This 177-nucleotide RNA was probed chemically with 2A3 and DMS. For DMS the reverse transcriptase was MarathonRT. Values cover nucleotides 27 to 126. The RNA was probed in 150 mM KOAc, 10 mM MgCl2 and 150 mM bicine (pH 8.5) at 24 C.
RNA sequence: GGGAACGACUCGAGUAGAGUCGAAAAAGUAGUAUGCUAAUCAGCUUCCCAGCUGAUGAUGAGAAGGUUCUUACCAGAUGCAAAGUGGCCGCAGCUAUAUGCUUCCGCAUGAAGAAGGAGCUGGGAGCUCCAACAGUGGAUUCGUCCACUGUUGGAGAAAAGAAACAACAACAACAAC
Reactivity to 2A3 in 0.01 (KOAc 150mM, MgCl2 10mM, bicine 150mM(pH8.5), 24C), signal-to-noise 2, nucleotides 027 to 126: a000g100u160a020g020u050a100u250g050c030u060a110a050u040c020a000g030c000u070u020c020c000c000a010g000c010u010g000a040u030g020a050u100g070a040g080a080a060g050g020u070u020c030u100u100a050c010c010a020g010a130u070g060c030a080a010a060g060u080g060g030c010c010g000c010a050g000c010u080a070u060a030u300g040c000u060u000c060c060g040c060a090u110g020a010a050g060a050a030g060g050a050g010c000u020g040g010g020a020g040
Reactivity to DMS in 0.01 (KOAc 150mM, MgCl2 10mM, bicine 150mM(pH8.5), 24C), signal-to-noise 5, nucleotides 027 to 126: a060g020u000a080g010u010a080u010g020c040u000a150a060u000c010a020g010c020u000u000c040c020c020a300g010c000u000g000a020u000g010a110u010g010a110g000a050a120g020g010u000u010c050u000u000a080c060c060a080g000a100u010g000c070a060a080a100g010u000g000g010c050c070g010c060a030g000c040u000a090u010a100u000g000c020u000u010c090c120g000c100a080u010g010a090a060g010a110a080g000g000a080g010c040u010g000g000g010a120g010